[RMDB]
RNA sequence: GGGAACGACUCGAGUAGAGUCGAAAAUCAUAUCAGCGCGACUAUGCUCUCGCUGCCUAAGCGAUGGCUAGUCUGUCAGACCGGGAACGCCCUCGUCCCGGAGCCUGGCAUCAGCUAGAGGGAUCUACCGAUGGGUUCGGUCGCGGGACUCGUCGGGCCUGAAUAAGCAGUUCGCUGCUUAUUCAGGAAAAGAAACAACAACAACAAC
Reactivity to 2A3 in 0.01 (KOAc 150mM, MgCl2 10mM, bicine 150mM(pH8.5), 24C), signal-to-noise 2, nucleotides 027 to 156: u080c020a040u090a080u210c090a090g090c040g010c020g130a000c000u030a030u300g000c000u000c000u000c040g000c010u090g090c030c080u100a060a010g000c000g010a000u020g010g000c010u030a010g060u000c010u000g030u020c010a010g010a060c000c000g000g000g020a000a030c000g120c030c000c000u030c000g000u000c010c000c000g000g000a000g100c020c000u000g020g000c030a110u100c060a070g070c060u160a010g010a030g000g010g000a010u070c030u140a090c000c020g000a000u000g000g020g000u000u000c020g040g140u120c060g020c030g160g000g000a000c000u000c000g000u000c000g010g000g000